This 207-nucleotide RNA was probed chemically with 2A3. The data come from the RNA Mapping Database (RMDB), library M2RFPK. The reactions ran in a buffer of 150 mM KOAc, 10 mM MgCl2 and 150 mM bicine (pH 8.5), at 24 C.
RNA sequence: GGGAACGACUCGAGUAGAGUCGAAAAGCUUCCUCUUGGCGCGGAGGUUUAACUGCGCUCGCUCCGCAUAUCGGUGUGGGCGCACCGGAUUUACAAAUUAAAGUCCUUUAGGGAGCGGAAAGGGACAAAAACUUGCACGUGUUCGCACGUGCAAGAACCUUGUGGAUAUGUUCGCAUAUCCACAAGGAAAAGAAACAACAACAACAAC
Reactivity to 2A3 in 0.01 (KOAc 150mM, MgCl2 10mM, bicine 150mM(pH8.5), 24C), signal-to-noise 2, nucleotides 027 to 156: g020c020u070u000c010c000u010c030u030u080g070g010c010g030c040g070g050a060g060g000u060u090u170a030a020c040u030g000c000g010c000u000c000g000c020u030c020c000g100c080a100u070a130u300c030g000g000u020g000u010g030g020g000c000g000c000a010c000c000g020g000a000u120u150u140a100c090a050a070a040u100u140a040a080a010g020u030c000c000u020u010u020a050g020g000g020a030g020c010g000g020a090a050a010g050g000g030a040c090a010a080a030a010a060c000u000u000g000c000a000c000g000u020g020u070u060c070g050c120a000c000g000u010g000c010a000a010g000a000a000